[RMDB]
RNA sequence: GGGAACGACUCGAGUAGAGUCGAAAAGAACGAGAGAGAACUCACGAACGUGUGAUCUCUCUCGUGAGAGUGAACUCACGUUCGUGUGAUCGUGUGAACGAGAACGAUCGAACACACGUGUUCACGAGAACGUACUCGUGAGAACGUGUACGAGUUCGUUCGUUAGCAAGUUCGCUUGCUAACGAACAAAAGAAACAACAACAACAAC
Reactivity to DMS in 0.01 (KOAc 150mM, MgCl2 10mM, bicine 150mM(pH8.5), 24C), signal-to-noise 2, nucleotides 027 to 156: g000a240a040c000g020a020g000a070g030a070g130a050a090c120u000c020a030c000g000a100a130c150g010u000g030u000g030a180u000c010u000c000u000c000u000c060g000u000g000a110g010a140g030u010g030a050a060c010u000c020a120c140g000u000u010c020g020u010g020u000g000a120u000c030g000u000g000u010g000a140a150c040g010a050g010a100a050c070g030a080u000c020g010a030a170c050a090c000a000c000g030u000g010u000u000c000a030c000g020a020g040a080a120c210g000u020a070c010u000c000g030u000g020a070g000a020a030c040g000u010g010u000a110c050g000a130g010u020u010c010
Reactivity to 2A3 in 0.01 (KOAc 150mM, MgCl2 10mM, bicine 150mM(pH8.5), 24C), signal-to-noise 6, nucleotides 027 to 156: g080a040a000c000g000a000g000a000g000a000g040a100a080c040u050c030a010c020g110a250a040c080g070u100g020u020g190a200u080c000u000c000u000c000u000c010g000u030g000a040g000a000g030u140g040a030a020c010u010c000a030c040g010u000u000c020g000u020g000u020g030a040u040c010g000u030g020u040g090a050a030c030g000a030g030a090a020c070g030a090u130c010g010a040a010c010a000c000a000c020g010u020g080u050u030c000a000c000g000a000g000a110a050c150g030u190a130c020u000c000g000u020g000a010g000a020a010c030g010u030g010u060a030c090g010a000g030u020u010c020

This 207-nucleotide RNA was probed chemically with DMS and 2A3. The RNA was probed in 150 mM KOAc, 10 mM MgCl2 and 150 mM bicine (pH 8.5) at 24 C. It was measured as part of the RMDB library OK3TST. Reactivities are rounded to 0.1 and cut off at 0 and 3. The 2A3 profile rests on 5,871 reads.